[RMDB]
RNA sequence: GGGAACGACUCGAGUAGAGUCGAAAAGCGGCAAGGUCAGAUCCAAACAGCAUCUGAAAAAGCGCCGCACAAAGAAAUAGCCCCGCUAAAGGCGACAUAUAGACCAGCAACGCCGAACCUAAAAGGCUUCUGCUUUACUGUUCGCAGUAAAGCAGAAAAAAGAAACAACAACAACAAC
Reactivity to 2A3 in 0.01 (KOAc 150mM, MgCl2 10mM, bicine 150mM(pH8.5), 24C), signal-to-noise 2, nucleotides 027 to 126: g010c000g010g000c010a050a020g150g070u030c010a010g000a010u060c070c040a200a040a190c020a050g000c010a000u010c000u000g010a110a000a020a030a000g160c100g000c000c000g100c000a010c020a010a090a020g110a010a080a050u080a040g020c000c000c010c010g000c020u100a070a050a020g030g010c000g010a010c030a010u220a000u070a060g080a040c020c010a040g010c020a040a000c020g010c020c010g020a030a070c000c030u040a060a060a050a010g000g000c000
Reactivity to DMS in 0.01 (KOAc 150mM, MgCl2 10mM, bicine 150mM(pH8.5), 24C), signal-to-noise 2, nucleotides 027 to 126: g020c000g000g000c040a250a070g000g000u000c000a010g000a000u050c100c210a080a190a200c290a200g010c270a000u000c000u000g000a000a090a010a150a180g000c300g040c050c000g010c000a090c190a070a150a150g040a050a140a030u010a050g000c000c010c000c030g070c070u030a060a030a050g010g000c020g000a020c220a030u020a100u050a060g000a090c100c040a050g010c180a070a060c030g020c000c010g000a050a110c070c020u000a050a070a160a090g000g010c050